Source: RMDB library OK1LIB, as collected in RNAgym. Chemical mapping of a 177-nucleotide RNA with DMS and 2A3. Reactivities are rounded to 0.1 and cut off at 0 and 3. The DMS profile rests on 1,458 reads. 2A3 adducts were read by reverse transcription with SuperScript II with manganese. For 2A3, 381 sequencing reads were counted.
[RMDB]
RNA sequence: GGGAACGACUCGAGUAGAGUCGAAAAUAUAAAAAGUAAUAUGAUGUUUAGUGGCUAUGUAAGUGAACAAUGUAUAAAUAAUGAUGAAUGGUUUGUUACUAAUGAUAAUGGCUAUGUAAAAGAGCAGUCUGAGCUAAAUGUUCGCAUUUAGCUCAGAAAAAGAAACAACAACAACAAC
Reactivity to DMS in 0.01 (KOAc 150mM, MgCl2 10mM, bicine 150mM(pH8.5), 24C), signal-to-noise 1, nucleotides 027 to 126: u000a050u050a000a040a070a050a190g010u030a010a130u010a070u000g000a050u020g000u000u000u000a110g000u000g000g000c050u020a030u000g000u010a000a110g030u050g050a040a010c120a150a020u000g000u020a100u000a060a040a060u000a110a080u000g000a170u030g000a160a060u000g000g020u000u000u040g000u000u000a000c030u010a020a100u030g000a090u030a030a120u010g000g050c030u000a000u010g000u040a090a010a050a100g000a020g000c050a060g000
Reactivity to 2A3 in 0.01 (KOAc 150mM, MgCl2 10mM, bicine 150mM(pH8.5), 24C), signal-to-noise 1, nucleotides 027 to 126: u300a000u000a000a220a000a000a000g210u090a100a080u060a160u160g180a060u040g000u000u000u260a000g000u000g000g010c000u000a000u150g090u140a000a180g060u200g210a020a000c000a000a140u090g150u140a130u230a070a300a000u220a020a000u300g050a050u040g000a000a000u090g020g020u000u000u000g010u000u040a000c000u250a000a090u220g000a070u210a140a000u160g000g000c070u070a160u020g050u050a000a060a170a170g130a090g010c000a000g000